[RMDB]
RNA sequence: GGGAACGACUCGAGUAGAGUCGAAAAGGCUGCAGGACAUCGCGAUGAAAACCUCUUUCAGCAGGGACGAAGCGUGAGUGUCGAUACCUGAGGCAGAUGCAGCGGCUAGCUCCGCACUAACAGCCGCUAUUAUAUUGAUAUUCGUAUCAAUAUAAUAAAAAGAAACAACAACAACAAC
Reactivity to 2A3 in 0.01 (KOAc 150mM, MgCl2 10mM, bicine 150mM(pH8.5), 24C), signal-to-noise 1, nucleotides 027 to 126: g210g000c040u110g000c000a060g100g110a020c000a050u040c050g000c000g180a210u190g120a050a040a110a130c000c000u060c120u100u300u160c140a180g050c080a030g060g030g040a100c070g040a110a040g030c030g010u010g050a150g040u020g020u010c040g030a100u160a160c010c000u100g030a070g000g000c040a070g040a300u230g080c030a000g010c060g030g010c020u020a060g000c030u050c100c170g130c010a030c040u090a090a000c010a020g040c000c000g020c000